[RMDB]
RNA sequence: GGGAACGACUCGAGUAGAGUCGAAAAGGAGAGCAUUAUCGAUGCGUUGGAGAGCAAUGAGCACGCUCAGGCAAGCAGGCUGCCUGGGAGGUUACAGGAUCUGCUGGCACUUAUGGAAUCAGAUUAAGUGAUAUACGAGCUUCGGCUCGUAUAUCACAAAAGAAACAACAACAACAAC
Reactivity to DMS in 0.01 (KOAc 150mM, MgCl2 10mM, bicine 150mM(pH8.5), 24C), signal-to-noise 2, nucleotides 027 to 126: g020g010a060g010a110g020c020a040u000u000a090u000c090g010a090u000g010c090g030u030u000g000g020a090g000a100g010c050a080a050u000g000a080g010c030a100c140g000c010u000c020a040g010g020c020a030a140g020c050a050g000g030c090u020g000c030c020u000g000g020g000a040g020g000u010u000a050c100a080g000g010a090u010c000u020g010c020u000g000g020c050a050c040u010u000a070u000g020g020a110a090u000c100a080g020a090u020u010a070a130
Reactivity to 2A3 in 0.01 (KOAc 150mM, MgCl2 10mM, bicine 150mM(pH8.5), 24C), signal-to-noise 1, nucleotides 027 to 126: g100g010a050g000a030g050c040a080u060u060a090u250c080g070a090u050g030c050g050u020u060g040g030a040g030a010g020c000a020a130u100g040a000g050c060a000c090g060c020u020c030a000g060g000c000a020a010g050c000a020g040g070c040u030g000c030c000u000g000g020g010a030g060g020u070u080a060c040a050g040g000a000u040c020u010g000c000u000g040g000c030a030c060u120u060a020u150g000g100a110a070u060c020a060g050a100u100u070a240a030

Structure probing data (DMS and 2A3) for a 177-nucleotide construct.
For 2A3, 1,149 sequencing reads were counted.